[RMDB]
RNA sequence: GGGAACGACUCGAGUAGAGUCGAAAAGAUAUGGAUCCUGUAGGGAGCCUGGGUCGGAAACGAUUAGGCUUUGAUCUACACGGGAUCCUAAGUCAAACGAGUUAGCGAGUUCGCUCGCUAACUCGAAGCUACUAAAUAGCUUCGGCUAUUUAGUAGCAAAAGAAACAACAACAACAAC
Reactivity to 2A3 in 0.01 (KOAc 150mM, MgCl2 10mM, bicine 150mM(pH8.5), 24C), signal-to-noise 3, nucleotides 027 to 126: g020a010u080a030u180g000g000a000u000c000c000u030g020u020a010g020g060g040a010g000c030c020u110g160g000g060u010c020g010g070a080a060a010c000g000a020u040u050a010g000g000c000u210u060u080g040a050u040c010u040a020c080a060c210g040g020g010a000u020c010c000u000a070a010g090u050c060a040a060a140c030g000a000g010u010u000a000g010c020g000a010g010u080u120c250g120c130u000c010g000c000u000a010a000c000u000c000g000a000a010
Reactivity to DMS in 0.01 (KOAc 150mM, MgCl2 10mM, bicine 150mM(pH8.5), 24C), signal-to-noise 2, nucleotides 027 to 126: g010a030u000a300u010g000g020a010u010c000c000u010g010u000a020g000g000g000a020g000c010c000u010g010g040g000u000c000g010g000a100a050a110c000g000a000u010u010a040g000g000c000u000u000u000g000a080u010c000u000a010c040a070c260g000g010g000a000u000c000c020u010a010a090g000u000c020a090a140a270c020g010a020g000u000u000a000g010c000g010a020g020u000u020c250g000c000u000c000g020c010u000a000a000c000u000c000g000a020a090